[RMDB]
RNA sequence: GGGAACGACUCGAGUAGAGUCGAAAAGAUUACGUGUCGUUGUGGAAUCGAUACUACGCACGAGAUUCCAAGGUCUCUGUAGUACGUCCGCUGGUGACGUCUUUGUAGUCACGUUCGAUAUACGAAAGGUAUCAACUACCUUCGGGUAGUUGAUACCAAAAGAAACAACAACAACAAC
Reactivity to 2A3 in 0.01 (KOAc 150mM, MgCl2 10mM, bicine 150mM(pH8.5), 24C), signal-to-noise 2, nucleotides 027 to 126: g070a020u000u170a000c020g040u070g000u030c000g000u000u080g000u060g010g040a010a080u130c000g010a030u000a000c000u000a000c000g020c020a050c130g000a000g000a000u150u000c280c070a130a010g180g000u000c000u000c000u060g000u000a000g000u070a000c000g040u000c020c020g000c050u020g070g030u080g000a030c020g030u000c090u140u060u110g060u010a030g000u010c000a010c070g010u040u050c010g050a040u030a000u010a210c080g030a130a010a000
Reactivity to DMS in 0.01 (KOAc 150mM, MgCl2 10mM, bicine 150mM(pH8.5), 24C), signal-to-noise 2, nucleotides 027 to 126: g000a070u020u020a010c110g010u050g020u000c040g020u000u000g010u000g000g000a090a030u010c000g000a080u000a040c000u000a010c030g000c150a050c180g000a000g000a020u000u000c220c220a080a110g000g000u000c000u000c000u000g020u000a010g000u040a000c020g010u000c000c000g000c050u010g050g020u000g000a030c000g040u000c060u000u000u040g000u000a060g000u000c000a050c090g020u010u010c030g010a140u010a040u010a100c070g030a050a070a080